Structure probing data (DMS and 2A3) for a 207-nucleotide construct. Source: RMDB library OK3TST, as collected in RNAgym. The reactions ran in a buffer of 150 mM KOAc, 10 mM MgCl2 and 150 mM bicine (pH 8.5), at 24 C. For DMS, 2,162 sequencing reads were counted. For DMS the reverse transcriptase was MarathonRT.
[RMDB]
RNA sequence: GGGAACGACUCGAGUAGAGUCGAAAAUCUAAGGCAUUCCCAGGGGUGCGUGGCUGCCCUCACUUCCACUGGAGGGGGUGCCCCAUAGGGAGCACAGGCUGGCGAGGAUGUUCUGGGUCUGUGGGAGCCAAGAACAGCCACAUCUGGAGCAGCCCGAUCACGUAAUAGUCUUCGGACUAUUACGUGAAAAAGAAACAACAACAACAAC
Reactivity to DMS in 0.01 (KOAc 150mM, MgCl2 10mM, bicine 150mM(pH8.5), 24C), signal-to-noise 1, nucleotides 027 to 156: u010c040u030a050a150g070g010c140a170u000u000c010c000c020a200g000g010g020g030u000g020c060g030u000g040g040c080u000g040c000c000c010u010c020a060c060u000u000c060c110a140c100u000g030g000a190g050g040g010g030g020u010g010c000c000c000c050a220u010a090g030g030g000a150g000c000a060c040a110g010g030c050u010g010g010c090g000a160g010g040a080u000g000u000u010c030u000g010g010g010u000c030u010g040u020g020g000g020a300g010c030c000a080a070g000a040a080c020a050g020c020c020a070c020a000u000c000u010g000g000a150g020c030a090g030c040c000c000g050a300
Reactivity to 2A3 in 0.01 (KOAc 150mM, MgCl2 10mM, bicine 150mM(pH8.5), 24C), signal-to-noise 3, nucleotides 027 to 156: u050c030u060a040a060g090g010c020a080u050u030c010c010c030a000g030g000g000g020u080g040c100g040u100g060g000c030u060g060c030c030c010u020c010a050c040u190u070c090c040a120c150u170g000g030a050g030g000g010g000g000u010g010c010c000c000c010a040u080a060g000g020g020a030g010c030a010c010a050g050g020c030u050g060g120c030g060a050g010g050a040u070g020u060u050c050u070g040g000g070u060c050u090g020u090g050g030g010a010g040c010c020a030a030g040a030a020c020a020g030c000c000a030c010a020u060c040u050g010g010a090g050c020a010g020c000c000c000g050a040